[RMDB]
RNA sequence: GGGAACGACUCGAGUAGAGUCGAAAAUUAAAGGAAAUUGACGGAAGAACACCACAAGGAGUGGAGUGUGCGGCUUAAUUUGACUCAACGCGGGACAGCUUACCAGGCCCGACGGCCGGACGAGUGUAAGACUCUAGUUAUUCGUAACUAGAGUCUUAAAAGAAACAACAACAACAAC
Reactivity to 2A3 in 0.01 (KOAc 150mM, MgCl2 10mM, bicine 150mM(pH8.5), 24C), signal-to-noise 6, nucleotides 027 to 126: u050u040a030a020a050g120g020a090a060a080u110u110g040a040c040g040g040a050a030g040a060a040c020a030c040c000a030c040a100a100g190g030a120g100u040g010g030a070g040u100g030u060g020c040g020g000c000u060u060a040a050u110u090u100g040a040c010u010c060a030a020c050g010c000g040g000g000a030c020a020g010c010u010u030a060c020c010a030g030g020c020c010c000g130a100c020g010g010c010c000g000g030a030c030g030a020g030u090g040u050
Reactivity to DMS in 0.01 (KOAc 150mM, MgCl2 10mM, bicine 150mM(pH8.5), 24C), signal-to-noise 7, nucleotides 027 to 126: u030u030a060a080a110g000g010a030a070a070u020u010g010a060c050g000g010a080a090g010a100a050c090a110c040c020a050c070a150a130g000g010a180g040u010g000g010a080g020u010g020u010g010c060g010g000c040u000u010a020a060u010u010u010g000a060c040u000c040a030a070c090g000c050g000g000g010a060c090a110g000c060u010u010a090c070c040a100g000g010c020c010c060g030a090c130g000g000c020c020g000g000a040c090g000a050g010u010g000u020